[RMDB]
RNA sequence: GGGAACGACUCGAGUAGAGUCGAAAAAGGCUAAUAACAUUGAGCUUCACAUAGAUGAUGGGAUUAAUGAAAUUGAUGCCAGCGUUGAGGAGACUGUUAAAAUACCUCAUGAGUGGUGCAUUAUUAGUGACAUUCCAUAUUUCGAUAUGGAAUGUCAAAAAGAAACAACAACAACAAC
Reactivity to DMS in 0.01 (KOAc 150mM, MgCl2 10mM, bicine 150mM(pH8.5), 24C), signal-to-noise 5, nucleotides 027 to 126: a110g020g010c030u010a030a040u010a030a080c130a130u010u010g010a110g000c030u000u010c010a060c070a140u000a130g010a070u000g010a060u000g000g000g000a040u010u010a030a050u000g000a060a070a300u010u010g000a040u000g010c010c010a160g010c050g010u000u000g010a030g000g010a110g010a090c180u010g020u000u010a050a100a120a130u010a060c010c010u000c020a040u010g000a120g020u000g010g020u000g010c040a080u000u000a030u000u000a050g010
Reactivity to 2A3 in 0.01 (KOAc 150mM, MgCl2 10mM, bicine 150mM(pH8.5), 24C), signal-to-noise 3, nucleotides 027 to 126: a020g120g000c020u020a020a000u070a070a020c050a100u070u110g050a020g050c030u090u080c020a040c000a090u260a040g120a120u130g000a040u030g010g030g050a020u010u090a040a040u110g090a120a100a100u100u070g040a030u050g080c000c000a030g040c060g040u020u030g020a000g020g020a030g000a040c060u070g120u100u040a060a090a020a030u100a050c000c000u000c010a010u060g090a050g130u050g000g050u050g000c010a030u020u080a030u000u030a100g050